RNA sequence: GGGAACGACUCGAGUAGAGUCGAAAAUGUGUGCUCGAGAGCCUCCCUGUCCGACAGAGCUUUUAGAUCUUCUGAUCUUUCCCUGGAGGAUAUCCCUUAUGCUUCAAGCGAUUCUCGGAAUAAUUAAUCUUAAGGAAGUGUUCGCACUUCCUUAAGAAAAAGAAACAACAACAACAAC
Reactivity to 2A3 in 0.01 (KOAc 150mM, MgCl2 10mM, bicine 150mM(pH8.5), 24C), signal-to-noise 1, nucleotides 027 to 126: u110g090u000g040u040g080c030u050c050g050a110g010a050g040c030c020u020c010c010c020u020g060u060c010c010g000a020c000a020g020a030g000c000u080u100u100u060a000g010a000u020c000u130u000c120u300g000a010u000c000u000u020u010c010c000c000u020g070g000a040g000g000a020u030a030u080c030c040c000u110u080a130u190g070c000u070u180c040a080a000g000c000g070a030u080u050c030u020c030g030g050a030a100u110a100a000u220u060a080a120
Reactivity to DMS in 0.01 (KOAc 150mM, MgCl2 10mM, bicine 150mM(pH8.5), 24C), signal-to-noise 3, nucleotides 027 to 126: u010g010u010g010u010g000c010u000c020g020a080g010a190g010c040c020u000c010c010c030u000g000u010c000c020g000a190c090a040g000a080g010c300u010u000u010u000a020g000a030u000c010u000u020c260u020g020a030u000c010u000u000u000c020c010c010u000g000g000a260g000g010a050u000a070u010c050c010c020u000u000a050u000g010c030u000u000c060a050a100g020c070g000a120u000u000c060u000c010g010g000a090a090u000a070a080u000u020a040a150